Description: The record gives the reactivity of an RNA of 177 nucleotides to 2A3 and DMS. Reactivities are given for positions 27 through 126. The 2A3 profile rests on 5,471 reads. For DMS the reverse transcriptase was MarathonRT. The RNA was probed in 150 mM KOAc, 10 mM MgCl2 and 150 mM bicine (pH 8.5) at 24 C. Source: RMDB library OK2TST, as collected in RNAgym.
[RMDB]
RNA sequence: GGGAACGACUCGAGUAGAGUCGAAAAGGCACAUUUUGCGGAAAAUCCAGUAAAUGCCAUGGUUCAAUACAACUACUUUGGGACAUUUGCUCGCUUGCUGCUGAUGAUGCAUGAUCCCGCCUUAAGGCGGAGGUCGUACUUUCGAGUACGACCUCCGAAAAGAAACAACAACAACAAC
Reactivity to 2A3 in 0.01 (KOAc 150mM, MgCl2 10mM, bicine 150mM(pH8.5), 24C), signal-to-noise 5, nucleotides 027 to 126: g040g020c010a010c000a010u000u150u210u150g000c030g010g040a210a170a000a050u010c020c020a020g010u010a010a010a010u010g010c020c000a020u020g010g030u040u110c080a120a070u210a300c040a140a030c090u090a020c030u100u060u050g050g000g080a050c020a010u010u000u020g000c000u000c040g010c010u000u060g000c000u030g010c000u010g000a020u020g030a080u010g000c010a030u040g030a040u020c000c010c000g020c000c030u160u190a110a060g100g010
Reactivity to DMS in 0.01 (KOAc 150mM, MgCl2 10mM, bicine 150mM(pH8.5), 24C), signal-to-noise 4, nucleotides 027 to 126: g010g010c000a020c020a030u000u000u010u000g010c020g020g000a050a060a050a040u010c050c100a030g030u000a010a020a020u000g010c000c000a050u000g010g000u000u000c100a090a110u010a070c300a070a100c100u000a020c080u000u010u000g000g000g020a110c030a010u000u000u010g010c000u010c290g020c120u000u000g000c010u000g030c000u000g000a040u000g000a140u000g000c000a040u000g010a110u000c010c010c000g010c120c060u000u020a040a070g010g000